[RMDB]
RNA sequence: GGGAACGACUCGAGUAGAGUCGAAAAGAUAUGGACACCUUGACCCUGACUAAAAGGACAUGAAGUUAUUCGGAAACGAAUGUCAGCUUCAACAGCCUUUUAGUCAGGGUCAAGAGUGUCCUAAGUCCUCACGAGUAACGUUCGCGUUACUCGUGAGAAAAGAAACAACAACAACAAC
Reactivity to DMS in 0.01 (KOAc 150mM, MgCl2 10mM, bicine 150mM(pH8.5), 24C), signal-to-noise 1, nucleotides 027 to 126: g020a190u020a250u000g000g020a010c000a000c000c050u000u000g000a040c010c010c000u010g000a040c000u000a000a000a010a010g020g000a040c090a170u000g010a000a020g040u000u000a070u020u000c000g030g000a140a080a300c010g020a010a000u000g020u030c300a110g020c020u000u000c000a000a080c300a220g020c010c010u000u000u000u000a010g000u000c000a010g000g010g000u000c000a000a020g000a120g040u000g010u000c000c000u010a040a130g020u000c050